[RMDB]
RNA sequence: GGGAACGACUCGAGUAGAGUCGAAAACUCCAUCUGGUCCGUCCGGGCCCUCUUCGCCGGAGGCGCCCCCUCCCCGUCCUUAUCCUUCUUUCCAAGUAUUCCUUUGAUGUUUCCCAGCCAGGGAUUUAGAGCGCUCAGUUCGCUGAGCGCAAAAGAAACAACAACAACAAC
Reactivity to 2A3 in 0.01 (KOAc 150mM, MgCl2 10mM, bicine 150mM(pH8.5), 24C), signal-to-noise 3, nucleotides 027 to 129: c010u010c050c000a040u020c020u090g020g000u000c000c020g130u090c050c080g030g000g000c030c030c010u010c030u120u110c050g100c050c000g000g000a020g020g010c080g040c000c000c000c000c000u060c000c000c000c000g020u040c000c000u060u160a050u030c010c010u010u000c010u010u090u000c000c030a070a000g030u020a130u040u040c030c000u100u010u090g040a030u030g060u040u000u000c000c000c000a000g000c010c010a000g020g050g000a050u100u030u080a090g020a020
Reactivity to DMS in 0.01 (KOAc 150mM, MgCl2 10mM, bicine 150mM(pH8.5), 24C), signal-to-noise 3, nucleotides 027 to 129: c050u060c010c000a140u040c080u060g000g030u010c040c060g020u000c090c060g000g000g060c070c030c030u020c050u000u000c000g100c250c060g040g030a110g040g000c150g000c050c000c000c050c010u010c000c000c000c000g020u010c000c050u040u040a150u030c000c020u000u010c040u000u000u000c060c030a090a240g020u060a150u030u040c040c030u000u090u010g020a110u030g000u050u060u040c040c000c040a150g020c000c070a090g010g020g020a080u030u030u030a120g020a140